[RMDB]
RNA sequence: GGGAACGACUCGAGUAGAGUCGAAAAAGGACUGCCAUUCAUUAUGCUUAGUUUUUGGGGCGCGGUUUUUUGUCCCCUCGAAUUGGGUCAGCCCCUCCAAGCCUCGAAUUGGGUCAGCCCCUCCAAGACCGCUCAUGGCAUUCGUGCCAUGAGCGGUAAAAGAAACAACAACAACAAC
Reactivity to 2A3 in 0.01 (KOAc 150mM, MgCl2 10mM, bicine 150mM(pH8.5), 24C), signal-to-noise 1, nucleotides 027 to 126: a000g030g000a010c000u000g090c100c030a010u040u040c020a020u060u180a140u150g060c070u180u070a150g020u210u200u160u080u170g010g010g010g000c040g000c000g120g090u030u170u000u000u020u070g030u170c000c000c140c000u080c150g290a210a260u260u030g000g030g000u030c030a030g050c000c010c010c010u000c000c000a050a000g000c020c070u110c030g000a070a120u010u010g010g000g010u080c000a010g000c000c000c000c010u000c030c000a000a000g070
This 177-nucleotide RNA was probed chemically with 2A3. The RNA was probed in 150 mM KOAc, 10 mM MgCl2 and 150 mM bicine (pH 8.5) at 24 C.